[RMDB]
RNA sequence: GGGAACGACUCGAGUAGAGUCGAAAAGAAAGUGCUUAAACCGUGUGGACGCGAAUGGCUAUAACCACAGAAACCUGAGGAAACAGGAAGCCACAACGCAAGCCAUGUGGUUAGCACACGGAAGAAACAUGCAGUACUACUUCGGUAGUACUGCAUGAAAAGAAACAACAACAACAAC
Reactivity to 2A3 in 0.01 (KOAc 150mM, MgCl2 10mM, bicine 150mM(pH8.5), 24C), signal-to-noise 8, nucleotides 027 to 126: g120a030a050a000g010u000g030c020u130u140a100a010a020c000c000g010u000g000u000g010g000a020c020g010c010g030a050a020u030g010g000c010u030a020u060a240a080c120c040a100c050a130g160a060a070a030c010c010u030g020a110g040g290a170a110a010c000a000g030g000a000a020g000c000c000a040c030a170a090c010g000c020a090a110g060c000c000a010u010g010u020g000g000u000u020a000g000c000a000c000a000c020g080g070a110a050g020a060a160a010
Reactivity to DMS in 0.01 (KOAc 150mM, MgCl2 10mM, bicine 150mM(pH8.5), 24C), signal-to-noise 4, nucleotides 027 to 126: g000a160a070a100g000u000g000c020u000u010a040a040a020c000c000g000u010g010u010g010g000a110c080g000c020g040a210a230u000g000g000c000u020a090u010a060a090c070c130a110c190a150g030a080a130a060c110c010u000g010a110g010g030a080a090a170c090a010g020g010a070a020g000c000c000a100c130a100a070c030g030c010a100a140g040c000c010a010u010g030u010g010g020u000u020a020g000c000a000c000a050c130g000g000a090a040g000a160a080a060